[RMDB]
RNA sequence: GGGAACGACUCGAGUAGAGUCGAAAAUGUACAUUGCCAUUCUUACAUACGUAUAAUCAAUGCCACUUGUUGACAAUAAACGUGAUGCAUAUCCGAAAUAAGGGCUCAUAUGGAAUGGAUUAUUAUGCCUAACGGUACGCUUCGGCGUACCGUUAGGAAAAGAAACAACAACAACAAC
Reactivity to DMS in 0.01 (KOAc 150mM, MgCl2 10mM, bicine 150mM(pH8.5), 24C), signal-to-noise 2, nucleotides 027 to 126: u000g000u000a040c090a230u060u080g010c010c050a030u030u000c040u000u000a220c090a170u000a160c120g020u000a070u070a150a060u000c100a160a010u000g150c060c070a080c160u100u070g060u010u000g000a090c240a170a300u100a010a170a110c000g000u060g010a060u000g010c060a030u050a050u020c050c000g010a040a040a100u020a010a060g000g010g000c060u020c050a000u000a130u060g000g000a000a000u010g060g030a050u060u000a060u030u000a050u010g000
Reactivity to 2A3 in 0.01 (KOAc 150mM, MgCl2 10mM, bicine 150mM(pH8.5), 24C), signal-to-noise 2, nucleotides 027 to 126: u270g010u080a040c000a040u040u210g060c000c000a040u000u000c000u120u030a040c000a030u020a080c000g110u180a000u090a160a130u130c170a050a040u130g020c040c000a180c060u010u020g120u080u040g000a040c030a230a130u200a200a160a000c040g030u040g100a000u040g080c050a030u010a000u110c010c030g000a030a110a050u170a040a150g010g050g030c000u080c180a150u160a010u130g000g000a040a000u010g000g000a030u070u040a100u010u050a000u080g010